[RMDB]
An RNA of 207 nucleotides, treated with DMS and 2A3 and read out base by base. For 2A3 the reverse transcriptase was SuperScript II with manganese. The RNA was probed in 150 mM KOAc, 10 mM MgCl2 and 150 mM bicine (pH 8.5) at 24 C. It was measured as part of the RMDB library RNAMAK.
RNA sequence: GGGAACGACUCGAGUAGAGUCGAAAAUGCCAUUCGUGGCAACUACAUCCUAAGUCUACGUCGAUGAGGCAUUAGGGAGUUCUAUCGGAAACGAUAGAACAUCGAUCUAAUGCUACCCACCAUUCGUAGAUAUGGACAUCUUCGUAUUCGUACGAAAACCAUAAAAACAAUUCGUUGUUUUUAUGGUAAAAGAAACAACAACAACAAC
Reactivity to DMS in 0.01 (KOAc 150mM, MgCl2 10mM, bicine 150mM(pH8.5), 24C), signal-to-noise 5, nucleotides 027 to 156: u000g030c000c000a120u000u000c240g060u010g020g030c010a040a130c100u020a110c110a110u010c000c000u000a070a230g010u000c000u000a020c000g030u000c220g000a030u000g020a090g020g020c010a020u000u010a010g020g000g000a070g010u000u000c000u000a000u000c000g010g010a190a150a300c020g010a020u000a010g010a010a010c000a070u000c130g010a100u010c000u000a010a010u000g010c010u000a040c030c010c010a050c020c010a200u000u000c010g030u000a010g010a010u000a300u000g000g000a050c050a130u000c070u000u010c020g020u010a070u000u000c180g030u000a030c010g000a020a060a150
Reactivity to 2A3 in 0.01 (KOAc 150mM, MgCl2 10mM, bicine 150mM(pH8.5), 24C), signal-to-noise 1, nucleotides 027 to 156: u080g000c000c000a020u070u080c300g110u070g000g000c010a040a040c050u180a070c040a100u030c000c000u050a130a050g020u000c000u000a020c010g050u070c090g130a100u030g010a030g030g000c000a000u000u000a010g000g010g010a020g000u000u000c000u000a000u000c000g020g060a100a050a060c010g000a000u000a000g000a000a000c000a060u130c020g070a050u020c000u000a000a000u000g010c000u030a070c030c020c020a060c020c020a100u060u050c010g000u010a000g000a000u020a020u060g010g000a010c010a140u050c090u030u000c000g010u010a030u060u070c170g050u050a010c070g010a090a030a020